[RMDB]
RNA sequence: GGGAACGACUCGAGUAGAGUCGAAAAGUAUCCCUAGAUGAUAAAACACCGCACAUGGCUCGUAAGAGCGGUUAAAAUAGCAAGUAAUGCAAAUUACGCGAGGUAACGCAUGGCCUAGGCUCGUUAGAAAAGGGAGAAUCCUUCGGGAUUCUCCCAACCACUACAUAUUCUUCGGAAUAUGUAGUGGAAAAGAAACAACAACAACAAC
Reactivity to 2A3 in 0.01 (KOAc 150mM, MgCl2 10mM, bicine 150mM(pH8.5), 24C), signal-to-noise 2, nucleotides 027 to 156: g040u010a090u080c000c000c000u020a080g090a260u180g010a060u090a150a090a000a000c020a000c020c010g000c000a010c010a190u070g080g000c000u020c050g020u090a130a040g040a010g060c030g000g000u060u050a050a100a060a010u070a040g010c060a160a000g030u090a080a050u110g030c100a100a070a030u090u090a050c030g000c020g040a030g000g080u040a040a010c050g000c060a090u080g030g020c010c020u010a040g090g000c000u020c020g000u020u090a090g130a070a090a090a040g000g000g000a000g000a000a000u000c000c010u020u040c130g020g000g000a000u000u000c000u020c000c010c000a000a000
Reactivity to DMS in 0.01 (KOAc 150mM, MgCl2 10mM, bicine 150mM(pH8.5), 24C), signal-to-noise 2, nucleotides 027 to 156: g010u000a170u000c010c000c000u000a070g010a140u020g020a150u000a040a090a160a130c040a080c030c000g010c020a140c070a160u000g000g030c040u010c030g020u000a150a100g010a040g020c020g050g020u010u010a080a060a160a160u000a050g010c010a060a160g020u000a050a060u000g030c110a090a120a100u000u000a040c090g010c030g000a100g030g010u000a100a120c040g020c040a070u010g000g010c060c010u010a190g020g020c050u000c050g020u020u000a100g000a050a100a090a150g000g010g010a000g050a030a030u000c000c020u000u020c300g090g010g020a020u000u000c010u000c010c000c000a000a000